RNA sequence: GGGAACGACUCGAGUAGAGUCGAAAAAAAGAUAUGGAAUGGAGGGAGCUAUAACGUCAUCGAUCUUAGCUCGGAAACGAGCUAAGGGAGACGGAUUAUAGCGUUGAUCUCCAUUCCUAAGUCAAAACCACUGACAUUACUUCGGUAAUGUCAGUGGAAAAGAAACAACAACAACAAC
Reactivity to DMS in 0.01 (KOAc 150mM, MgCl2 10mM, bicine 150mM(pH8.5), 24C), signal-to-noise 1, nucleotides 027 to 126: a070a090a080g000a070u000a300u010g000g010a060a010u000g020g000a000g000g000g000a010g000c000u030a010u000a000a020c080g000u000c080a260u000c070g000a280u000c020u000u000a000g010c000u000c000g010g000a060a090a260c000g010a000g010c000u000a000a000g000g020g000a300g000a000c030g010g000a050u000u000a000u010a000g000c000g000u000u020g000a060u000c010u000c000c020a010u010u000c000c010u000a010a070g000u000c010a120a080a100a080

Record summary
An RNA of 177 nucleotides, treated with DMS and read out base by base. The RNA was probed in 150 mM KOAc, 10 mM MgCl2 and 150 mM bicine (pH 8.5) at 24 C. DMS adducts were read by reverse transcription with MarathonRT. The DMS profile rests on 941 reads. It was measured as part of the RMDB library TTRDES.